[RMDB]
RNA sequence: GGGAACGACUCGAGUAGAGUCGAAAAGAUAUGGAUGAUGCAUGGGAGCUCUACAAUCGGAAACGAUUGAGAGCAUCGAUCAUGUCAUCAUCCUAAGUCAAAACUUUACAACUUCGGUUGUAAAGAACUACAUUUAUAGGUUCGCCUAUAAAUGUAGAAAAGAAACAACAACAACAAC
Reactivity to DMS in 0.01 (KOAc 150mM, MgCl2 10mM, bicine 150mM(pH8.5), 24C), signal-to-noise 6, nucleotides 027 to 126: g000a040u010a300u000g010g000a000u000g010a020u000g000c000a010u010g000g010g010a100g020c000u000c000u010a160c010a010a010u000c000g020g000a100a080a130c000g010a010u000u000g010a050g000a020g020c010a100u000c200g000a110u010c000a010u000g000u020c010a000u000c000a010u000c000c000u000a000a080g000u000c030a140a090a090a210c010u010u000u000a000c000a010a010c000u000u020c250g040g010u000u000g000u000a000a000a010g000a090a230
Reactivity to 2A3 in 0.01 (KOAc 150mM, MgCl2 10mM, bicine 150mM(pH8.5), 24C), signal-to-noise 6, nucleotides 027 to 126: g020a020u040a020u120g000g000a000u000g000a000u000g000c010a010u010g030g130g150a180g030c000u020c000u170a300c040a010a010u000c010g030g000a050a030a020c010g000a010u010u010g010a010g000a010g000c010a020u100c030g040a160u130c000a000u020g160u140c000a000u000c000a000u000c000c000u010a010a000g020u000c020a040a040a110a220c000u010u010u010a010c000a040a010c020u050u120c300g210g000u010u000g000u010a000a010a000g000a020a020
An RNA of 177 nucleotides, treated with DMS and 2A3 and read out base by base. The DMS profile rests on 10,905 reads. DMS adducts were read by reverse transcription with MarathonRT. It was measured as part of the RMDB library TTRDES. The reactions ran in a buffer of 150 mM KOAc, 10 mM MgCl2 and 150 mM bicine (pH 8.5), at 24 C.